[RMDB]
RNA sequence: GGGAACGACUCGAGUAGAGUCGAAAACUUCACGUUGAGCCUCACGCACAAUACCUGAAGAUGAAGUUUUGUUCGUUCGGCUCGCGUUAUGCAAACUAAAAUCUAGAUGUUCGCAUCUAGAUUUUAGCAAUCACUAUCUCUUCGGAGAUAGUGAUUGAAAAGAAACAACAACAACAAC
Reactivity to 2A3 in 0.01 (KOAc 150mM, MgCl2 10mM, bicine 150mM(pH8.5), 24C), signal-to-noise 8, nucleotides 027 to 126: c010u060u050c040a000c010g030u060u300g010a000g000c000c000u020c010a000c000g040c000a010c000a010a030u040a060c010c050u150g130a180a100g090a290u210g100a100a040g020u020u020u010u020g020u010u020c010g000u000u020c040g000g000c000u000c000g000c010g000u000u010a080u090g080c070a100a080a060c010u000a010a000a000a000u010c000u000a000g000a010u010g030u070u090c280g030c100a000u000c000u000a000g000a010u000u000u000u000a000g000
Reactivity to DMS in 0.01 (KOAc 150mM, MgCl2 10mM, bicine 150mM(pH8.5), 24C), signal-to-noise 7, nucleotides 027 to 126: c030u000u000c110a020c020g010u000u010g030a030g010c000c020u010c190a020c030g000c070a030c010a020a010u000a030c050c050u000g020a150a140g020a180u010g020a100a090g000u000u000u000u000g010u000u000c010g010u000u010c210g010g000c000u000c010g010c020g010u000u010a060u010g010c160a090a070a290c010u000a000a000a010a010u000c000u000a000g000a010u000g000u010u020c220g020c010a010u000c000u000a000g000a010u000u000u000u000a000g000
Structure probing data (2A3 and DMS) for a 177-nucleotide construct. The 2A3 profile rests on 14,450 reads. 2A3 adducts were read by reverse transcription with SuperScript II with manganese. The RNA was probed in 150 mM KOAc, 10 mM MgCl2 and 150 mM bicine (pH 8.5) at 24 C. For DMS, 10,547 sequencing reads were counted.